[RMDB]
RNA sequence: GGGAACGACUCGAGUAGAGUCGAAAACGGUUACGCCUUCUUUACCGUUAUCAAGGAAGGUACUCGGCCAUGCUAAGGGAAGCAUUAUUCCUUAGGCGCAUCUCGCCGCCAGCAUGGUGUGAGGGGAAAAAGUAUGCUGGGUUCGCCCAGCAUACAACCCAAGCGCAAUGUUCGCAUUGCGCUUGGGAAAAGAAACAACAACAACAAC
Reactivity to 2A3 in 0.01 (KOAc 150mM, MgCl2 10mM, bicine 150mM(pH8.5), 24C), signal-to-noise 2, nucleotides 027 to 156: c000g000g000u050u020a010c040g010c020c000u000u000c010u000u030u070a040c020c020g260u130u110a040u070c120a030a040g050g000a000a000g020g000u030a040c000u010c000g020g000c020c000a010u020g000c020u090a140a110g040g000g000a040a030g010c110a180u170u090a140u060u180c000c000u070u050a060g000g000c000g010c000a130u090c010u070c130g040c070c040g000c010c000a010g000c000a000u000g010g000u030g230u160g000a040g000g040g000g020a060a120a030a000a010g000u000a000u010g000c000u000g000g030g000u010u060c080g130c060c000c000a000g000c000a000u000a000c010a000a000